Overview: Conditions: 150 mM KOAc, 10 mM MgCl2 and 150 mM bicine (pH 8.5), 24 C. This 207-nucleotide RNA was probed chemically with DMS and 2A3. Reactivities are rounded to 0.1 and cut off at 0 and 3.

[RMDB]
RNA sequence: GGGAACGACUCGAGUAGAGUCGAAAACUAAUAUGGUGCAAGGAACGAGUGAGAGACACCUGAGGUUAUAAAUAGCAAAGCAUGCUGCGGGGUGGGGAAGACCAUUCUGAAGUGCAAUGUUCAAGACGCUGGCUUAAUAUAUGACUAAGUGUCAGAAUACCACUGACGUAUUCGUACGUCAGUGGUAAAAAGAAACAACAACAACAAC
Reactivity to DMS in 0.01 (KOAc 150mM, MgCl2 10mM, bicine 150mM(pH8.5), 24C), signal-to-noise 1, nucleotides 027 to 156: c030u010a060a100u000a150u000g060g020u010g060c040a100a090g030g000a030a100c050g010a100g000u000g060a160g000a090g010a200c030a100c100c020u010g010a060g010g020u020u000a070u000a070a140a110u010a050g040c040a070a050a250g010c040a060u000g050c030u000g000c050g010g030g010g000u000g000g030g030g010a120a160g020a050c050c010a040u000u000c050u000g000a090a070g000u000g000c010a140a150u000g000u020u000c070a090a060g010a070c070g120c040u000g000g020c000u000u000a060a060u030a210u000a090u010g000a080c040u010a080a050g050u000g030u000c010a070g020a090a220
Reactivity to 2A3 in 0.01 (KOAc 150mM, MgCl2 10mM, bicine 150mM(pH8.5), 24C), signal-to-noise 2, nucleotides 027 to 156: c030u080a030a190u100a060u110g050g000u040g000c010a020a030g080g030a080a040c000g010a050g020u080g000a070g000a010g010a010c020a000c030c000u040g020a030g000g010u040u100a110u060a160a080a060u050a010g010c030a010a020a020g070c030a010u060g000c030u010g010c030g030g000g020g030u040g020g000g020g000a050a050g040a020c010c020a010u090u010c100u020g030a240a030g050u050g000c000a010a100u150g020u060u070c070a110a010g020a010c000g000c040u050g000g000c010u050u010a150a000u090a060u050a020u220g050a030c010u040a110a000g100u020g010u110c010a010g090a030a010
High DMS reactivity at an A or C suggests that its Watson-Crick edge is free. Source: RMDB library OK3TST, as collected in RNAgym.